Notes: Source: RMDB library OK1LIB, as collected in RNAgym. The record gives the reactivity of an RNA of 177 nucleotides to 2A3 and DMS. The reactions ran in a buffer of 150 mM KOAc, 10 mM MgCl2 and 150 mM bicine (pH 8.5), at 24 C.
RNA sequence: GGGAACGACUCGAGUAGAGUCGAAAAGAAUUGGUAUGUAAGCUACAGCUUCCGGUAGCUGCGUCACACUUUAAGAGUGUGCAUACUGAGCCGAAGCUCAGCUUCGGUCCCCCAAGGGAAGCUCAAAAAUAAUCACCCGAUUCGUCGGGUGAUUAUUAAAAGAAACAACAACAACAAC
Reactivity to 2A3 in 0.01 (KOAc 150mM, MgCl2 10mM, bicine 150mM(pH8.5), 24C), signal-to-noise 5, nucleotides 027 to 126: g130a050a120u040u010g000g000u020a000u000g000u000a020a010g000c000u000a010c030a060g010c000u000u000c000c000g000g000u000a000g000c010u000g000c000g020u010c000a000c000a000c000u090u120u280a300a140g210a010g240u010g000u000g000c000a000u000a000c000u000g010a000g000c000c000g010a000a000g030c030u100c300a040g000c000u010u000c000g010g000u000c010c000c000c020c010a010a060g090g000g000a000a000g000c000u010c020a110a120a000
Reactivity to DMS in 0.01 (KOAc 150mM, MgCl2 10mM, bicine 150mM(pH8.5), 24C), signal-to-noise 3, nucleotides 027 to 126: g010a100a100u020u000g020g000u000a000u000g010u000a300a250g000c010u010a000c010a100g000c010u000u000c000c010g000g010u000a000g000c000u000g010c020g010u000c000a000c020a000c000u000u010u050a100a060g020a030g020u000g040u000g020c000a000u000a010c010u000g000a020g000c000c000g000a010a010g000c020u060c140a150g000c000u000u000c010g000g010u000c020c030c020c230c170a100a090g000g000g010a020a010g000c010u030c090a030a070a150